[RMDB]
RNA sequence: GGGAACGACUCGAGUAGAGUCGAAAAGAUAUGGACAGCGACGAAGUACUGACCGAAGAACUCGGAAACGAGGGAGGUCGGUACAGAGCUGUCCUAAGUCAAACUCCCGGCGUUCGCGCCGGGAGAAGUACUUAGAAGACUUCGGUCUUCUAAGUACAAAAGAAACAACAACAACAAC
Reactivity to DMS in 0.01 (KOAc 150mM, MgCl2 10mM, bicine 150mM(pH8.5), 24C), signal-to-noise 2, nucleotides 027 to 126: g000a050u030a300u000g000g010a030c010a010g020c000g000a240c200g000a140a140g000u000a000c000u010g010a010c000c000g010a100a190g010a090a200c000u000c000g000g000a080a100a140c010g020a020g000g000g000a030g010g000u000c010g000g000u010a010c000a050g000a110g000c010u000g000u000c000c000u000a010a040g000u000c040a090a150a180c010u000c000c000c020g010g000c000g040u000u000c220g020c060g000c000c010g000g000g000a010g000a010a050
Reactivity to 2A3 in 0.01 (KOAc 150mM, MgCl2 10mM, bicine 150mM(pH8.5), 24C), signal-to-noise 2, nucleotides 027 to 126: g040a010u070a070u140g000g000a000c010a030g020c020g220a300c050g030a300a020g000u000a000c000u000g000a010c010c020g120a230a030g000a050a020c000u000c010g000g020a080a060a040c000g000a000g000g000g000a020g010g000u000c010g000g000u000a010c000a000g010a010g000c010u010g000u000c000c000u000a020a000g020u000c020a050a050a090c010u000c000c000c000g000g000c020g010u100u160c300g020c010g030c150c050g030g030g000a000g020a010a020
This 177-nucleotide RNA was probed chemically with DMS and 2A3. The DMS profile rests on 2,009 reads. For 2A3 the reverse transcriptase was SuperScript II with manganese. The 2A3 profile rests on 3,091 reads.